[RMDB]
RNA sequence: GGGAACGACUCGAGUAGAGUCGAAAAUAAUUUCAGCGUACUAGCGAAUUGAUGUUAGAUGGAUAGCAAUGACUGUAGGCUAUCCAAUGUGUGCAAAUCGCACAAUACGCUGAACUACAGUCAUGAGGAUCAUCGUGAUAUUCGUAUUGUGAUGAUCAAAAGAAACAACAACAACAAC
Reactivity to 2A3 in 0.01 (KOAc 150mM, MgCl2 10mM, bicine 150mM(pH8.5), 24C), signal-to-noise 9, nucleotides 027 to 126: u140a000a060u020u010u000c000a000g000c000g010u000a000c000u010a000g010c020g140a080a170u180u220g140a160u300g030u010u000a010g000a060u010g000g000a000u000a000g000c010a030a050u080g000a000c000u000g000u010a000g010g000c000u000a000u000c000c000a000a000u010g000u000g000u000g010c060a060a060a180u300c040g000c000a000c000a000a000u000a000c000g000c000u000g000a000a000c010u010a000c000a000g000u000c000a030u120g080a030g130
Reactivity to DMS in 0.01 (KOAc 150mM, MgCl2 10mM, bicine 150mM(pH8.5), 24C), signal-to-noise 9, nucleotides 027 to 126: u050a070a080u040u000u000c000a000g010c000g010u000a050c010u000a010g000c010g020a140a180u050u030g020a090u050g010u000u000a010g000a250u000g000g000a010u000a000g000c010a040a040u010g010a010c000u000g010u000a020g000g000c000u010a000u000c000c000a010a020u000g000u000g010u010g000c170a120a120a130u070c130g000c000a000c010a020a080u000a000c000g010c010u000g000a000a030c140u000a010c000a010g010u000c000a110u060g010a160g010